[RMDB]
RNA sequence: GGGAACGACUCGAGUAGAGUCGAAAAGAUAUGGACGAUGUAUGAGAAACACACAGCCGUUGAAAUGAGCUUCGGAAACGAAGCUCAUGGAGGCUGUGGUAUAUUACCAUACCGCUCGUCCUAAGUCGAUGAUCUUAAACUUCGGUUUAAGAUCAUCAAAAGAAACAACAACAACAAC
Reactivity to DMS in 0.01 (KOAc 150mM, MgCl2 10mM, bicine 150mM(pH8.5), 24C), signal-to-noise 4, nucleotides 027 to 126: g010a060u000a280u020g000g000a040c020g040a030u020g000u000a020u000g000a110g010a130a200a190c300a090c010a010c000a010g020c010c000g010u000u010g000a100a120a010u000g010a000g000c000u000u000c000g000g000a050a050a150c000g010a000a000g020c000u000c000a000u000g000g000a020g010g020c000u000g010u010g000g010u010a020u010a050u000u010a210c170c010a040u000a000c000c050g010c050u000c010g000u000c010c000u000a030a070g010u010c040
Reactivity to 2A3 in 0.01 (KOAc 150mM, MgCl2 10mM, bicine 150mM(pH8.5), 24C), signal-to-noise 3, nucleotides 027 to 126: g040a030u090a030u140g000g000a000c010g000a040u300g100u010a000u010g130a160g130a290a140a010c130a010c000a000c000a140g000c000c050g300u300u080g010a020a010a010u000g000a000g000c000u000u000c010g000g010a020a030a020c010g000a000a000g000c000u010c000a000u010g000g020a000g000g000c010u010g000u000g000g010u010a000u000a000u000u120a110c110c000a010u000a010c000c050g000c020u010c010g010u000c000c000u020a050a010g090u060c120
Overview:
The record gives the reactivity of an RNA of 177 nucleotides to DMS and 2A3. The RNA was probed in 150 mM KOAc, 10 mM MgCl2 and 150 mM bicine (pH 8.5) at 24 C. For DMS the reverse transcriptase was MarathonRT. High DMS reactivity at an A or C suggests that its Watson-Crick edge is free. The 2A3 profile rests on 9,085 reads. Values cover nucleotides 27 to 126.